[RMDB]
RNA sequence: GGGAACGACUCGAGUAGAGUCGAAAAGUAAAAGCGCAAAAGAAGCUCAGUGCAAGAGCAUGACCUAAGUAUAAAAAUACAGCCAUGAGGUCAAACGCGGAACAAAACCGCGAAAUGGCAAAAAAAACUAUUCAUUCAUGUUCGCAUGAAUGAAUAGAAAAGAAACAACAACAACAAC
Reactivity to 2A3 in 0.01 (KOAc 150mM, MgCl2 10mM, bicine 150mM(pH8.5), 24C), signal-to-noise 1, nucleotides 027 to 126: g030u050a020a070a070a040g000c070g000c100a100a120a010a040g110a130a010g010c030u010c040a040g070u080g160c020a070a070g000a010g050c040a020u030g010a010c000c020u040a140a030g070u070a090u080a160a210a010a040a010u100a030c000a010g020c020c000a020u050g040a010g000g030u000c010a000a000a010c000g000c000g000g000a130a000c040a050a140a010a020c020c020g000c000g010a120a040a030u030g000g000c000a030a000a000a040a000a000a000a000
Reactivity to DMS in 0.01 (KOAc 150mM, MgCl2 10mM, bicine 150mM(pH8.5), 24C), signal-to-noise 2, nucleotides 027 to 126: g040u010a020a090a120a060g020c070g030c060a070a060a060a100g020a110a120g000c030u000c040a130g010u040g030c060a070a090g000a010g020c010a140u010g020a010c000c020u000a080a150g030u000a040u020a010a100a040a060a070u000a090c170a150g020c000c010a010u010g050a070g000g000u010c040a060a050a170c010g000c000g000g050a170a090c170a100a040a120a080c030c000g000c000g000a010a060a060u000g000g030c020a000a000a000a010a060a000a070a060